[RMDB]
RNA sequence: GGGAACGACUCGAGUAGAGUCGAAAAUCUGUUUACAAGUAAUCGUUAAGUCCAUGUCUGACAACGGUUGCGGAAACAGAAGUCAGUUGGCCUCAAGUCCGACAUGGACUAUUGCUAGAACUGAUCACUACUGCAUAGUAUUCGUACUGUGCAGUAGAAAAGAAACAACAACAACAAC
Reactivity to 2A3 in 0.01 (KOAc 150mM, MgCl2 10mM, bicine 150mM(pH8.5), 24C), signal-to-noise 9, nucleotides 027 to 126: u000c000u010g020u020u040u060a090c050a070a010g010u010a020a020u050c050g040u040u150a090a010g000u000c000c000a030u040g030u000c030u030g010a000c010a030a020c040g010g000u010u010g010c010g020g010a030a020a010c040a040g100a100a010g060u020c010a010g000u040u080g030g010c000c000u040c060a080a040g000u000c000c000g010a050c040a050u060g000g000a000c000u010a020u010u030g000c000u010a010g010a040a010c010u010g010a020u040c020a000
Reactivity to DMS in 0.01 (KOAc 150mM, MgCl2 10mM, bicine 150mM(pH8.5), 24C), signal-to-noise 9, nucleotides 027 to 126: u000c010u000g010u000u000u000a100c130a100a090g010u000a010a020u000c190g010u010u010a090a060g010u000c000c050a050u000g000u000c070u000g000a020c010a060a160c180g010g000u000u000g010c050g000g000a060a040a030c060a070g010a080a110g010u000c030a050g020u000u000g010g000c010c010u000c160a110a150g000u000c000c050g000a070c090a050u000g000g010a010c000u000a030u000u000g000c000u000a080g010a040a020c020u000g000a030u000c150a200

About this RNA:
Conditions: 150 mM KOAc, 10 mM MgCl2 and 150 mM bicine (pH 8.5), 24 C. The record gives the reactivity of an RNA of 177 nucleotides to 2A3 and DMS. DMS adducts were read by reverse transcription with MarathonRT. Values cover nucleotides 27 to 126. Source: RMDB library OK2TRN, as collected in RNAgym. For DMS, 71,925 sequencing reads were counted. For 2A3 the reverse transcriptase was SuperScript II with manganese.